[RMDB]
RNA sequence: GGGAACGACUCGAGUAGAGUCGAAAAGAUAUGGAUAAUGCAUGCAAGGGAGCUAGUCGGAAACGAUUUGUACUCCUGAUGACCAUGACAUUAUCCUAAGUCAAACUGCUUCCUUCGGGAAGCAGAACUAGGCAAUAUUGUUCGCAAUAUUGCCUAGAAAAGAAACAACAACAACAAC
Reactivity to 2A3 in 0.01 (KOAc 150mM, MgCl2 10mM, bicine 150mM(pH8.5), 24C), signal-to-noise 4, nucleotides 027 to 126: g040a020u050a020u110g000g000a000u000a000a000u010g000c010a010u000g030c080a210a300g040g010g000a010g010c030u030a000g020u000c000g000g030a040a040a040c010g000a020u040u010u050g050u120a150c010u020c000c010u040g050a120u170g050a050c050c010a000u030g260a300c010a000u040u000a000u010c000c000u000a050a010g010u010c050a050a070a120c010u010g000c000u010u010c000c000u010u050c230g150g010g000a000a010g000c000a000g000a000a020
Reactivity to DMS in 0.01 (KOAc 150mM, MgCl2 10mM, bicine 150mM(pH8.5), 24C), signal-to-noise 5, nucleotides 027 to 126: g010a040u000a300u020g000g000a000u000a000a020u000g000c020a010u000g000c040a070a140g000g010g000a020g030c040u000a020g010u010c000g010g010a090a090a160c010g010a020u000u000u000g010u000a130c010u000c000c000u000g020a060u020g000a170c300c010a000u010g000a110c000a000u000u000a010u000c000c010u010a010a060g010u000c020a100a140a200c010u000g000c000u000u010c000c000u000u010c230g020g010g010a010a000g010c000a000g010a050a110
This 177-nucleotide RNA was probed chemically with 2A3 and DMS. For DMS the reverse transcriptase was MarathonRT.